Background
The data come from the RNA Mapping Database (RMDB), library OK2TST. The record gives the reactivity of an RNA of 177 nucleotides to DMS and 2A3. Values cover nucleotides 27 to 126. The 2A3 profile rests on 2,371 reads. The RNA was probed in 150 mM KOAc, 10 mM MgCl2 and 150 mM bicine (pH 8.5) at 24 C. DMS adducts were read by reverse transcription with MarathonRT.
RNA sequence: GGGAACGACUCGAGUAGAGUCGAAAACUAGGUAUAAGAAUGGUAAUGGCAAUGAUUUCUGAUAAAAUACCAAUCGUUAAAGCAAGGAUGAAAGAUCCAAAUAAUGGACCAAGAGUCAAACAAUGGCGAAACUGAUAGGAUUCGUCCUAUCAGUUUCAAAAGAAACAACAACAACAAC
Reactivity to DMS in 0.01 (KOAc 150mM, MgCl2 10mM, bicine 150mM(pH8.5), 24C), signal-to-noise 4, nucleotides 027 to 126: c040u000a050g020g030u000a040u010a070a040g010a130a040u000g000g010u010a060a100u010g010g010c080a080a060u010g000a110u000u000u000c040u000g000a130u030a050a070a110a080u000a030c030c020a070a110u000c110g010u010u000a040a070a130g000c070a130a100g010g000a020u010g000a070a090a070g010a050u010c010c010a030a080a070u000a090a070u000g000g000a030c040c020a050a060g020a190g010u010c060a080a060a070c160a030a060u000g000g010c270
Reactivity to 2A3 in 0.01 (KOAc 150mM, MgCl2 10mM, bicine 150mM(pH8.5), 24C), signal-to-noise 3, nucleotides 027 to 126: c020u040a060g000g060u060a080u000a120a040g050a040a060u090g020g010u120a080a040u080g080g070c100a060a070u090g060a080u060u080u060c020u000g040a040u100a190a130a070a010u050a020c030c000a020a060u070c070g050u060u130a090a010a020g010c040a060a050g050g030a010u060g050a050a070a060g110a030u020c000c000a000a030a030u160a060a030u100g050g000a010c010c010a090a020g040a040g080u010c020a000a120a010c040a030a180u060g060g000c030